Structure probing data (2A3) for a 207-nucleotide construct. The RNA was probed in 150 mM KOAc, 10 mM MgCl2 and 150 mM bicine (pH 8.5) at 24 C. The data come from the RNA Mapping Database (RMDB), library OK3TST.

[RMDB]
RNA sequence: GGGAACGACUCGAGUAGAGUCGAAAAAAGGGAAUGAGAUCUGCUCCUGGGAUGGCAUUUGAGGUUUUAUCAGGCCAAGUGCUGUGCGCCCUGGGGAGGAUUCCAGAGUUGGGUGACUUGUGUGUGGGUUCUACAGGGCCACCUGGUCCGGAGAUCACUACGUAUGCUCAUUCGUGAGCAUACGUAGAAAAGAAACAACAACAACAAC
Reactivity to 2A3 in 0.01 (KOAc 150mM, MgCl2 10mM, bicine 150mM(pH8.5), 24C), signal-to-noise 1, nucleotides 027 to 156: a010a020g050g020g020a100a060u110g010a080g000a110u020c070u120g010c070u060c050c010u040g110g010g000a060u070g010g000c060a040u000u000u080g170a180g040g030u070u150u010u100a180u250c130a100g000g000c050c000a020a020g020u010g070c020u010g040u160g080c080g020c030c000c030u080g000g010g000g020a060g000g000a080u190u030c060c010a010g020a000g040u050u080g050g000g000u050g030a060c030u110u050g060u010g000u030g020u080g230g070g000u010u000c020u010a030c000a090g000g000g050c000c000a120c020c150u180g000g000u000c000c060g040g000a040g010a000u060c000a000

For 2A3, 642 sequencing reads were counted.